[RMDB]
RNA sequence: GGGAACGACUCGAGUAGAGUCGAAAACUAUUAUCUAAGAGUAACUCAAGUAGACCAGUCUAUGGCAUGGAGUUCGCCUAUUUGGGUAGAUCUCCAUUAAAUGAAUAACAUCCAAAAAGAAGAGCACUAUGUGCAGUGUUUUCGAACACUGCACAUAAAAAGAAACAACAACAACAAC
Reactivity to DMS in 0.01 (KOAc 150mM, MgCl2 10mM, bicine 150mM(pH8.5), 24C), signal-to-noise 1, nucleotides 027 to 126: c030u000a060u000u040a060u010c080u000a050a090g010a120g010u020a060a040c080u000c030a030a110g020u010a030g010a160c030c000a090g010u020c060u010a130u000g020g010c100a040u010g000g000a000g000u000u010c030g000c000c010u000a190u010u010u030g030g010g020u010a050g020a010u010c010u010c000c010a010u000u010a060a030a070u000g000a070a070u000a060a110c120a190u000c010c060a090a020a110a100a100g010a080a020g000a020g010c090a070c160
Reactivity to 2A3 in 0.01 (KOAc 150mM, MgCl2 10mM, bicine 150mM(pH8.5), 24C), signal-to-noise 1, nucleotides 027 to 126: c020u050a090u130u040a100u110c080u080a120a000g000a030g170u010a050a070c010u010c050a000a020g110u060a020g120a150c050c090a000g050u040c060u140a080u010g070g000c010a010u000g000g000a000g000u010u010c060g040c000c010u220a300u200u160u280g030g000g020u050a160g030a030u000c000u000c000c030a000u030u080a030a080a030u040g070a000a020u060a230a010c000a010u000c000c020a080a000a020a000a120g090a070a020g050a020g020c050a050c110